RNA sequence: GGGAACGACUCGAGUAGAGUCGAAAACAUCUGUUCGCUCAAAAAUUCCGAAAGAACUUCGCAGGGAGAUAGAGGAUGCCGCCCACUCUUACAACUUUGAGUACCUUCUGGAACCUUAACCUGAAAACCUCAGCGCUAGUUUCGACUAGCGCUGAGGAAAAGAAACAACAACAACAAC
Reactivity to 2A3 in 0.01 (KOAc 150mM, MgCl2 10mM, bicine 150mM(pH8.5), 24C), signal-to-noise 1, nucleotides 027 to 126: c000a020u030c020u020g000u080u030c040g000c000u050c010a020a020a000a180a300u110u000c050c020g080a050a090a050g130a100a020c060u020u000c030g010c050a020g000g100g000a000g000a030u170a000g070a000g020g020a000u020g040c010c050g000c000c050c000a020c020u000c030u010u020a100c030a210a250c130u090u030u070g010a020g000u000a020c000c000u050u080c020u050g010g000a040a070c000c020u030u200a010a030c060c010u010g000a000a060a000a000

This 177-nucleotide RNA was probed chemically with 2A3. The 2A3 profile rests on 457 reads. Conditions: 150 mM KOAc, 10 mM MgCl2 and 150 mM bicine (pH 8.5), 24 C. Source: RMDB library OK1LIB, as collected in RNAgym.